RNA sequence: GGGAACGACUCGAGUAGAGUCGAAAAGCUGUCGGCGACUGCUGCCAACGACUUCGUGGAGCAGUGCCCCAGCGAGAUUCUGGCCGCCACCAACUACGAUGAGCCGGGCGCUUCGCAAAACUACAUGGACACUGCCAGUAUUCGUACUGGCAGUGUCAAAAGAAACAACAACAACAAC
Reactivity to DMS in 0.01 (KOAc 150mM, MgCl2 10mM, bicine 150mM(pH8.5), 24C), signal-to-noise 2, nucleotides 027 to 126: g010c030u000g020u000c140g040g030c020g020a060c010u000g000c020u000g030c000c000a100a050c020g020a220c280u010u010c060g030u000g000g000a050g030c020a010g020u000g010c010c000c060c030a010g010c000g010a160g010a110u000u020c020u000g010g020c000c070g000c030c030a030c030c020a150a020c090u000a070c100g000a070u000g010a150g000c040c010g010g010g020c040g030c040u000u000c010g040c160a080a080a080a140c120u010a080c180a070u000g010